[RMDB]
RNA sequence: GGGAACGACUCGAGUAGAGUCGAAAAUGUAAACGUGUUUCACCUGGCUUUUGAGGUGCACCAGCUGUAAUAACAACUAAAUCUGCAUCUUUACAGUCUUCGUAUUCACCUGCUUUCACAUCAACUGACCCCAGUCUAAUUUCGAUUAGACUGGGGUAAAAGAAACAACAACAACAAC
Reactivity to DMS in 0.01 (KOAc 150mM, MgCl2 10mM, bicine 150mM(pH8.5), 24C), signal-to-noise 2, nucleotides 027 to 126: u000g020u010a040a090a120c140g010u010g010u000u000u010c080a070c050c040u010g010g020c060u020u010u000u000g010a070g020g020u000g030c080a020c060c090a070g020c050u020g020u010a070a130u010a100a090c050a020a050c100u000a060a110a060u000c060u000g010c030a050u000c020u000u000u000a040c090a040g010u010c050u020u000c090g010u010a050u000u010c020a070c000c030u000g000c070u000u010u000c070a040c050a050u010c150a020a080c130u000g000
Reactivity to 2A3 in 0.01 (KOAc 150mM, MgCl2 10mM, bicine 150mM(pH8.5), 24C), signal-to-noise 1, nucleotides 027 to 126: u150g030u090a050a040a110c040g040u050g070u040u040u020c040a040c000c010u020g060g000c010u070u070u040u170g040a020g020g000u010g010c000a000c000c010a000g010c040u060g010u030a090a100u080a260a060c060a000a000c030u110a070a050a100u080c020u000g000c000a010u040c000u030u060u010a040c020a020g020u040c000u030u030c080g040u000a050u040u030c030a070c040c030u070g070c030u100u080u100c090a030c000a060u060c020a030a160c050u080g010